[RMDB]
RNA sequence: GGGAACGACUCGAGUAGAGUCGAAAAGGAAAAAGUCGUGAGCUGUUUGGAGUCCGUCCAAACAAAUGAAAGCCUCUCUGGCGAGAAUGCAGAACGCGUGGGGAAACGAUGCUCUUUUUUCCUUGCAGCUGUGGGAAAGGCUGAGAACAUCUCUCGGCCAAGACAGAAUCUUCGGAUUCUGUCUUGGAAAAGAAACAACAACAACAAC
Reactivity to 2A3 in 0.01 (KOAc 150mM, MgCl2 10mM, bicine 150mM(pH8.5), 24C), signal-to-noise 2, nucleotides 027 to 156: g000g000a020a030a010a000a000g060u090c060g100u070g090a040g030c030u010g010u030u010u010g030g020a040g090u230c150c040g080u000c020c020a010a000a000c020a010a050a040u160g020a060a060a070g030c010c000u000c000u010c050u070g070g000c020g000a030g050a060a090u210g040c060a020g040a180a060c040g040c030g060u030g000g000g000g000a040a110a040c060g040a050u100g020c020u020c000u050u050u020u000u020u000c000c000u020u030g000c000a030g000c010u040g010u130g100g040g000a070a090a120g030g000c050u040g030a030g030a080a030c010a080u080c020u000c030u030c070g000g010
Reactivity to DMS in 0.01 (KOAc 150mM, MgCl2 10mM, bicine 150mM(pH8.5), 24C), signal-to-noise 1, nucleotides 027 to 156: g010g020a020a040a040a050a130g020u000c070g020u000g010a090g050c020u020g010u000u020u000g010g010a150g000u020c160c060g030u010c000c010a020a010a040c010a020a100a090u010g000a140a130a120g040c060c000u000c050u000c040u000g050g020c000g030a060g000a110a120u000g020c100a120g000a090a150c040g050c030g050u000g000g010g000g000a030a050a080c080g000a080u000g000c040u010c000u020u000u000u000u000u000c010c000u000u000g020c080a100g040c030u010g020u000g030g000g010a080a050a060g010g010c080u040g010a030g000a050a110c100a070u010c040u000c010u000c040g040g050
Notes:
The record gives the reactivity of an RNA of 207 nucleotides to 2A3 and DMS. Reactivities are given for positions 27 through 156. For DMS the reverse transcriptase was MarathonRT.